RNA sequence: GGGAACGACUCGAGUAGAGUCGAAAACUACAAGGGGCCAAGGCCAAUGUGAUGCACAGCAGAGUCGAAGCCGUAUGCCCUGACCUCUCGGAGGUGGCUAUGGACAGGUUCACACUAGACAUGAAACGUGCAACCUAUCAUUCGUGAUAGGUUGCACAAAAGAAACAACAACAACAAC
Reactivity to DMS in 0.01 (KOAc 150mM, MgCl2 10mM, bicine 150mM(pH8.5), 24C), signal-to-noise 2, nucleotides 027 to 126: c020u020a050c140a110a100g010g000g000g020c010c090a110a130g030g010c010c060a060a150u010g010u000g040a160u010g020c080a030c110a090g000c050a060g010a080g030u000c000g000a120a130g000c010c030g000u020a070u010g000c040c020c070u000g010a020c040c010u000c050u000c090g030g000a130g010g040u000g020g030c030u000a020u000g010g000a120c130a120g010g000u000u020c050a070c050a070c070u000a070g010a110c090a050u010g010a070a070a120c210
Conditions: 150 mM KOAc, 10 mM MgCl2 and 150 mM bicine (pH 8.5), 24 C.
This 177-nucleotide RNA was probed chemically with DMS.
For DMS, 1,345 sequencing reads were counted.